RNA sequence: GGGAACGACUCGAGUAGAGUCGAAAACUGGUCAGCCUGUGCAGUGUCGGGAUCUGGCCACAGCUGGAAAUGGGUGAUGGACCAGCACUUUGAGGUGCUCCGGGGGUUAAUCGGGCUCAGAUGCCUGGUAAUUCCCCAUGUUCGCAUGGGGAAUUACAAAAGAAACAACAACAACAAC
Reactivity to 2A3 in 0.01 (KOAc 150mM, MgCl2 10mM, bicine 150mM(pH8.5), 24C), signal-to-noise 1, nucleotides 027 to 126: c070u020g010g010u020c010a010g000c000c020u000g030u070g050c070a080g050u020g080u260c060g040g000g020a060u090c020u060g050g000c060c000a020c010a050g060c000u070g040g090a040a120a120u080g070g020g060u080g060a110u110g100g050a060c020c000a030g040c000a030c030u140u120u250g100a110g010g050u020g050c030u030c050c000g000g010g030g020g000u020u070a030a030u140c030g000g000g030c010u000c030a070g050a160u240g000c000c020u030g020
Reactivity to DMS in 0.01 (KOAc 150mM, MgCl2 10mM, bicine 150mM(pH8.5), 24C), signal-to-noise 2, nucleotides 027 to 126: c100u010g010g000u010c020a050g020c010c010u000g010u010g050c090a080g000u010g000u000c060g010g020g000a120u010c060u010g010g000c020c030a020c090a060g000c060u000g000g000a070a100a090u010g010g010g000u000g020a110u010g020g010a100c050c060a040g000c030a040c070u000u020u010g000a140g020g010u000g010c020u000c050c080g010g010g000g010g000u020u000a070a070u020c050g000g000g020c000u000c130a100g030a100u000g000c010c010u000g000
An RNA of 177 nucleotides, treated with 2A3 and DMS and read out base by base.
DMS adducts were read by reverse transcription with MarathonRT.
2A3 adducts were read by reverse transcription with SuperScript II with manganese.
The data come from the RNA Mapping Database (RMDB), library OK2TRN.